RNA sequence: GGGAACGACUCGAGUAGAGUCGAAAAAAAGCCUUCCAGCUGUGAUUCCAUUAAAUACAGGUGUAUUGCUGUGGGCAGCUACAUCAGGUACUGUGGCAUUAAUAGGCUCAACUAAUUGCUGCAGUGGAUUUGUGCAGUAUUAUAUGCUUACUCAGAACACUAUCUGCGUAUUCGUACGCAGAUAGUGAAAAGAAACAACAACAACAAC
Reactivity to DMS in 0.01 (KOAc 150mM, MgCl2 10mM, bicine 150mM(pH8.5), 24C), signal-to-noise 2, nucleotides 027 to 156: a070a060a050g030c030c050u000u010c120c030a150g030c010u000g010u010g010a130u010u010c030c010a170u000u000a070a040a090u000a080c020a130g030g010u000g000u000a040u000u010g030c040u000g030u000g020g010g030c040a050g000c000u000a020c030a020u000c100a080g000g040u000a010c010u000g010u010g000g010c020a050u010u010a040a070u020a060g000g010c110u000c130a110a120c050u000a040a100u000u010g030c000u010g030c000a080g000u000g030g010a160u000u010u000g010u000g030c000a030g000u000a080u000u010a110u000a080u010g010c020u000u000a070c100u000c050a100g010a190a290
Reactivity to 2A3 in 0.01 (KOAc 150mM, MgCl2 10mM, bicine 150mM(pH8.5), 24C), signal-to-noise 5, nucleotides 027 to 156: a000a000a000g060c020c010u050u020c050c030a030g020c010u010g020u020g050a100u080u030c030c020a050u120u190a100a090a020u120a020c060a030g080g030u050g040u090a070u130u130g090c050u010g020u160g060g080g060c030a010g000c010u020a020c010a060u060c040a060g050g060u030a020c020u010g000u010g000g030c000a000u060u080a100a130u080a090g050g000c030u030c200a070a080c040u040a040a050u050u060g000c000u000g000c020a030g030u050g030g030a080u100u080u120g100u100g000c010a000g020u040a040u190u080a140u040a020u110g030c030u040u040a090c040u070c130a060g080a160a030
Chemical mapping of a 207-nucleotide RNA with DMS and 2A3. DMS adducts were read by reverse transcription with MarathonRT. The RNA was probed in 150 mM KOAc, 10 mM MgCl2 and 150 mM bicine (pH 8.5) at 24 C. For 2A3, 2,770 sequencing reads were counted. For DMS, 3,709 sequencing reads were counted. It was measured as part of the RMDB library OK3TST.